Structure probing data (DMS and 2A3) for a 177-nucleotide construct.
Reactivities are rounded to 0.1 and cut off at 0 and 3.
The RNA was probed in 150 mM KOAc, 10 mM MgCl2 and 150 mM bicine (pH 8.5) at 24 C.
DMS adducts were read by reverse transcription with MarathonRT.
It was measured as part of the RMDB library TTRDEL.
The DMS profile rests on 2,015 reads.
For 2A3, 2,742 sequencing reads were counted.
RNA sequence: GGGAACGACUCGAGUAGAGUCGAAAAGAUAUGGAUUCCAUUAUCGGCCACGCCACUUCGGAAACGAAUGCGUGGAACUACCGAGAAUGGAAUCCUAAGUCAAAAGAGGCUCCUUCGGGAGCCUCAAGAUAAUAUCAAUCUUCGGAUUGAUAUUAUCAAAAGAAACAACAACAACAAC
Reactivity to DMS in 0.01 (KOAc 150mM, MgCl2 10mM, bicine 150mM(pH8.5), 24C), signal-to-noise 2, nucleotides 027 to 126: g020a040u000a300u010g000g000a000u000u000c000c000a000u000u000a060u000c010g010g000c000c000a020c000g020c020c070a040c080u010u010c000g010g000a160a110a170c000g010a050a020u000g000c000g000u010g000g010a020a000c020u010a280c020c020g000a000g000a030a010u000g000g000a010a000u010c000c000u000a020a040g020u000c020a080a070a110a180g010a020g000g010c000u010c000c000u000u010c220g030g010g000a000g000c020c000u000c000a000a020
Reactivity to 2A3 in 0.01 (KOAc 150mM, MgCl2 10mM, bicine 150mM(pH8.5), 24C), signal-to-noise 1, nucleotides 027 to 126: g030a020u090a080u140g000g000a010u010u000c010c010a000u050u030a050u020c020g010g010c000c000a000c010g000c020c040a130c050u020u000c010g040g020a100a050a050c010g030a030a020u300g010c020g000u000g010g010a010a010c000u040a060c000c020g000a000g010a020a010u010g020g010a010a000u000c010c000u000a010a010g030u000c020a000a000a030a250g000a000g020g000c030u000c020c050u060u090c300g220g040g000a000g000c050c000u010c000a000a000